[RMDB]
RNA sequence: GGGAACGACUCGAGUAGAGUCGAAAAAGGCCUCGUUAAACAGGUAGGAAAACAAUACUCGCAAACGACUACGAGUACGCAUUAGCCGCUUAGUCGGCUAACGUUCUUUCUGAUUUUUCCUGUCGGAUCAGAGGGGGCGUAAUUUCAGGCAGGAUAGGUCCUAAGCGAGCUUCGGCUCGCUUAGGACAAAAGAAACAACAACAACAAC
Reactivity to 2A3 in 0.01 (KOAc 150mM, MgCl2 10mM, bicine 150mM(pH8.5), 24C), signal-to-noise 2, nucleotides 027 to 156: a000g180g020c000c000u060c050g020u030u120a060a080a060c020a020g020g070u100a020g030g170a040a070a080a000c120a060a100u060a040c010u000c000g050c040a090a010a230c050g100a040c100u110a040c070g000a000g010u030a050c120g050c090a020u010u010a000g000c030c000g080c070u100u060a010g140u300c000g000g000c000u000a000a000c000g000u000u000c000u000u000u020c010u000g000a010u000u000u000u000u030c000c000u000g000u010c000g000g000a000u010c000a000g010a000g000g000g000g010g010c000g020u020a040a120u110u140u300c090a000g000g010c000a000g000g000a030u080a050g020